RNA sequence: GGGAACGACUCGAGUAGAGUCGAAAAGAUUAGGCAGAUAACAACUAUUACGCCUCUUGCCACUGUAUUGUAAAGUAAACAACAAGAUAUAAGUUUAAUACACCUACGCGACAAGAUGAAUCAGCAAGUUUUGCUAUAUAUUCGUAUAUAGCAAAACAAAAGAAACAACAACAACAAC
Reactivity to 2A3 in 0.01 (KOAc 150mM, MgCl2 10mM, bicine 150mM(pH8.5), 24C), signal-to-noise 4, nucleotides 027 to 126: g050a040u120u150a040g010g000c040a020g070a160u080a140a040c080a060a020c070u050a040u140u070a040c060g010c000c000u000c000u030u050g020c000c000a030c060u080g030u050a050u130u050g060u080a040a090a130g060u030a060a030a040c020a020a010c020a050a060g060a080u070a020u050a250a030g000u010u040u050a070a050u050a030c010a010c010c020u030a020c030g010c020g030a030c010a020a010g020a090u090g010a020a070u070c020a000g040c040a060a090
Reactivity to DMS in 0.01 (KOAc 150mM, MgCl2 10mM, bicine 150mM(pH8.5), 24C), signal-to-noise 6, nucleotides 027 to 126: g010a100u010u010a070g020g020c020a070g010a090u010a060a120c100a080a110c090u010a100u000u010a120c110g000c020c010u000c030u000u000g000c010c030a070c040u020g010u010a030u010u000g000u000a040a060a120g000u000a030a030a030c040a070a070c110a080a100g000a100u000a090u000a080a110g010u000u000u000a040a070u000a030c060a030c130c070u000a030c050g000c050g000a020c050a040a020g000a070u000g010a060a030u000c060a060g010c140a050a090